[RMDB]
RNA sequence: GGGAACGACUCGAGUAGAGUCGAAAAGAUAUGGAGGUCGGGAGCUUGAGGUGCCGCAGAUAGUCAAGCAUUCGGAAACGAAUGCUUGACUGUAGGCACCUUCAAGCGAAGAACGACCUCCUAAGUCCGACAUGGAAAGGUUCGCCUUUCCAUGUCGAAAAGAAACAACAACAACAAC
Reactivity to DMS in 0.01 (KOAc 150mM, MgCl2 10mM, bicine 150mM(pH8.5), 24C), signal-to-noise 1, nucleotides 027 to 126: g030a080u000a300u010g030g010a000g040g010u020c010g030g010g000a160g000c000u010u000g010a030g000g030u010g000c000c000g020c290a230g000a070u020a020g000u000c000a010a010g050c000a010u000u000c000g000g000a150a150a300c010g000a020a000u010g000c000u000u000g000a010c000u000g000u000a060g000g030c000a020c000c000u010u010c000a000a030g000c010g030a080a180g010a080a230c010g030a040c010c010u010c000c000u000a000a080g010u000c040
Structure probing data (DMS) for a 177-nucleotide construct. DMS adducts were read by reverse transcription with MarathonRT.